The data come from the RNA Mapping Database (RMDB), library RFMREP.
Structure probing data (DMS and 2A3) for a 177-nucleotide construct.
For DMS the reverse transcriptase was MarathonRT.
The DMS profile rests on 3,630 reads.
As a SHAPE reagent, 2A3 marks flexible, mostly unpaired nucleotides at the ribose 2'-OH.
The RNA was probed in 150 mM KOAc, 10 mM MgCl2 and 150 mM bicine (pH 8.5) at 24 C.
RNA sequence: GGGAACGACUCGAGUAGAGUCGAAAAGCAUAAAGAUGUCAUCCAAGUAGCCAACACUGGGAUCCAGAAAAAUUGACUAUAAACAAGUAUGCUGUUUCGAUGAAAUUGUGUAAUAGAAACUAGAUUCGUACGAUAAGAAGUUCGCUUCUUAUCGUACAAAAGAAACAACAACAACAAC
Reactivity to DMS in 0.01 (KOAc 150mM, MgCl2 10mM, bicine 150mM(pH8.5), 24C), signal-to-noise 4, nucleotides 027 to 126: g030c040a040u010a050a100a080g000a110u000g010u000c060a070u000c050c080a100a160g010u000a060g000c020c040a020a050c140a140c030u000g000g010g020a100u000c030c030a060g000a030a050a050a070a100u000u000g000a070c040u000a030u000a050a100a060c100a060a130g010u010a040u000g000c010u000g010u000u000u000c040g000a070u010g010a080a070a100u000u010g010u010g010u000a040a060u000a100g010a040a050a080c050u010a080g010a130u010u010c090
Reactivity to 2A3 in 0.01 (KOAc 150mM, MgCl2 10mM, bicine 150mM(pH8.5), 24C), signal-to-noise 4, nucleotides 027 to 126: g030c020a020u090a050a180a010g130a080u090g000u050c010a010u010c020c000a030a040g000u010a010g070c010c030a070a010c020a040c070u010g040g010g040a060u000c060c010a060g140a070a110a010a000a010u100u080g020a040c020u070a020u150a240a150a000c030a070a020g070u060a060u070g020c000u030g070u000u040u020c070g030a070u090g100a060a050a090u140u090g040u010g000u090a050a080u090a090g090a060a090a010c060u040a060g020a090u040u100c060